[RMDB]
RNA sequence: GGGAACGACUCGAGUAGAGUCGAAAAUCACGUGUAUAAUGUUCCUAUCCGUAAUAUUAUGCACAAGGUAUGUUAGGAUAGAUAGACAACAUACUGCACUAGUAGUUGUCUACAAGAACUGACUGAAGAUAGUAUGCAGAUUCGUCUGUAUACUAUCAAAAGAAACAACAACAACAAC
Reactivity to DMS in 0.01 (KOAc 150mM, MgCl2 10mM, bicine 150mM(pH8.5), 24C), signal-to-noise 9, nucleotides 027 to 126: u010c050a080c200g000u000g010u000a010u000a000a010u000g010u000u000c040c040u020a110u050c230c150g000u020a020a010u000a010u000u000a000u000g000c000a020c020a210a140g000g010u010a040u010g010u000u000a040g010g010a100u030a070g000a170u000a000g000a010c000a000a010c000a090u000a020c000u000g000c250a120c220u020a010g020u000a020g010u000u000g000u000c000u000a010c090a080a060g010a090a110c020u010g000a050c020u000g000a130a110
Reactivity to 2A3 in 0.01 (KOAc 150mM, MgCl2 10mM, bicine 150mM(pH8.5), 24C), signal-to-noise 9, nucleotides 027 to 126: u080c010a020c120g000u000g000u000a000u000a000a010u010g010u000u010c040c030u070a210u130c090c050g010u020a000a000u010a010u020u000a000u000g000c000a000c010a000a000g110g010u100a030u140g010u010u020a010g010g030a060u030a090g050a070u000a000g000a030c000a010a000c020a160u020a010c000u030g070c140a100c120u090a010g000u000a000g000u000u000g000u000c000u000a000c000a000a030g040a050a030c000u010g020a000c000u020g030a040a010
About this RNA
This 177-nucleotide RNA was probed chemically with DMS and 2A3. Conditions: 150 mM KOAc, 10 mM MgCl2 and 150 mM bicine (pH 8.5), 24 C. For 2A3 the reverse transcriptase was SuperScript II with manganese. For 2A3, 37,979 sequencing reads were counted. Reactivities are given for positions 27 through 126. The data come from the RNA Mapping Database (RMDB), library OK1LIB.